[RMDB]
RNA sequence: GGGAACGACUCGAGUAGAGUCGAAAAGAUAUGGAUACAGGGAGCUCAGUGUCGGAAACGACACGUGAGCGAGGAUCUGUGAUCCUAAGUCAAAACGCCCUACGUUUGUUCGCAAACGUAGGGCGAACAUGGAUGAUGACUUCGGUCAUCAUCCAUGAAAAGAAACAACAACAACAAC
Reactivity to 2A3 in 0.01 (KOAc 150mM, MgCl2 10mM, bicine 150mM(pH8.5), 24C), signal-to-noise 1, nucleotides 027 to 126: g020a000u080a020u130g000g000a000u020a010c000a000g040g000g020a020g030c010u000c010a020g000u000g000u000c000g010g080a110a090a070c000g010a000c000a000c030g230u020g010a000g000c000g010a020g030g020a010u000c000u010g070u110g150a000u010c000c010u030a170a020g080u020c010a000a000a090a140c010g000c000c000c000u020a000c010g000u000u060u010g070u070u110c300g000c230a030a010a000c000g020u000a020g020g000g000c000g010a000a000
Reactivity to DMS in 0.01 (KOAc 150mM, MgCl2 10mM, bicine 150mM(pH8.5), 24C), signal-to-noise 2, nucleotides 027 to 126: g010a060u000a300u000g010g010a040u000a020c000a020g000g020g000a040g030c000u000c000a100g020u000g000u000c000g000g000a090a060a270c000g010a030c010a000c000g010u000g010a010g010c020g000a030g020g000a040u010c010u010g010u000g000a010u010c000c000u000a010a130g000u000c030a060a070a100a180c010g000c000c010c000u000a000c000g000u000u000u000g010u000u010c220g010c000a000a000a000c000g020u000a000g000g000g010c030g000a000a010